[RMDB]
RNA sequence: GGGAACGACUCGAGUAGAGUCGAAAAUCUGGUUAGUCGGUCUUUACAUAACUUUUAUUCUUCCAUAUCUUGUACUUAUGGCUAUCAACAUGAUCAUCAAAGGUCGCUCUGUCUGGGUUGACCGUAAGCUGAAGGACUGCAUCAGGAGCGGAUGCAACCUGUUUGAUGCUUUCGAGCAUCAAACAGGAAAAGAAACAACAACAACAAC
Reactivity to 2A3 in 0.01 (KOAc 150mM, MgCl2 10mM, bicine 150mM(pH8.5), 24C), signal-to-noise 1, nucleotides 027 to 156: u000c010u020g040g030u090u070a050g020u090c070g040g010u060c040u090u080u180a090c030a100u100a000a200c000u180u160u150u030a180u130u060c020u080u010c020c010a010u020a060u140c010u030u100g030u160a070c030u010u010a040u080g030g000c040u030a030u160c000a030a140c020a040u080g030a070u040c080a000u000c080a220a060a060g030g000u000c000g020c020u030c050u080g210u090c040u140g000g100g000u050u150g080a030c000c000g030u010a000a030g050c020u040g050a020a040g080g020a070c050u020g000c000a000u010c030a060g000g030a020g140c050g010g010a010u000g040c030a040a130
Structure probing data (2A3) for a 207-nucleotide construct. For 2A3, 399 sequencing reads were counted. The data come from the RNA Mapping Database (RMDB), library OK3TST. Reactivities are given for positions 27 through 156.